[RMDB]
RNA sequence: GGGAACGACUCGAGUAGAGUCGAAAACUAUCGUUCCCAUAUGGAUGACCUGCGUCUAUACAGUUGCAAUGUGCUUUAGACACUUCUUCUGGGUUUUAGCUUAUUUUAGUAAGAAACAUGUAGAAGUAUAGUUCUCAGUUCGCUGAGAACAAAAGAAACAACAACAACAAC
Reactivity to 2A3 in 0.01 (KOAc 150mM, MgCl2 10mM, bicine 150mM(pH8.5), 24C), signal-to-noise 5, nucleotides 027 to 129: c070u040a080u190c020g000u000u000c000c000c000a010u100a000u030g050g020a050u070g150a100c040c000u040g080c000g030u060c010u010a060u010a060c040a060g010u130u070g030c000a050a070u160g010u020g070c000u030u090u080a050g020a040c020a000c000u000u000c010u010u000c010u040g190g100g000u010u010u000u030a060g010c000u030u020a080u100u260u110u100a070g050u020a130a040g030a040a020a000c030a040u130g030u060a020g030a040a000g020u050a010u090a080
Reactivity to DMS in 0.01 (KOAc 150mM, MgCl2 10mM, bicine 150mM(pH8.5), 24C), signal-to-noise 5, nucleotides 027 to 129: c050u020a170u060c000g050u050u000c030c040c000a150u060a000u080g030g040a000u000g030a050c060c040u040g010c080g060u020c010u040a000u070a140c250a130g030u000u000g060c070a100a090u050g020u040g040c070u070u010u010a020g050a170c170a070c000u050u020c030u010u000c010u040g030g020g040u040u050u020u010a180g030c030u000u000a110u020u050u040u020a070g070u010a060a080g040a080a060a060c050a000u060g010u010a000g020a060a080g000u000a090u060a110

Structure probing data (2A3 and DMS) for a 170-nucleotide construct. For 2A3 the reverse transcriptase was SuperScript II with manganese. For 2A3, 6,077 sequencing reads were counted. Conditions: 150 mM KOAc, 10 mM MgCl2 and 150 mM bicine (pH 8.5), 24 C.